Source: RMDB library OK2TST, as collected in RNAgym.
Structure probing data (DMS) for a 177-nucleotide construct.
Reactivities are given for positions 27 through 126.
The DMS profile rests on 770 reads.
RNA sequence: GGGAACGACUCGAGUAGAGUCGAAAAUUGAUUGUGGACAGGAUUAGUAUUGGGUGGUGUGAGGUAUGGAUUAUAAUUUCCAAAGCUGUAUCCCGCUUGCUGAGAAACCUGUGGAAGAGGGGGUGCGGACAGAGAUUCUCUUCGGAGAAUCUCUGUCAAAAGAAACAACAACAACAAC
Reactivity to DMS in 0.01 (KOAc 150mM, MgCl2 10mM, bicine 150mM(pH8.5), 24C), signal-to-noise 1, nucleotides 027 to 126: u010u010g010a170u010u000g000u010g010g010a110c090a100g000g000a160u010u010a090g020u010a100u010u010g010g010g040u000g010g020u000g030u000g000a070g000g020u000a170u000g000g000a080u000u000a080u020a120a130u000u000u000c010c020a050a070a140g020c050u000g010u020a080u000c020c010c020g010c020u000u000g010c060u020g010a130g010a120a080a020c080c070u010g030u030g020g000a040a070g000a110g000g000g020g000g010u010g010c100g050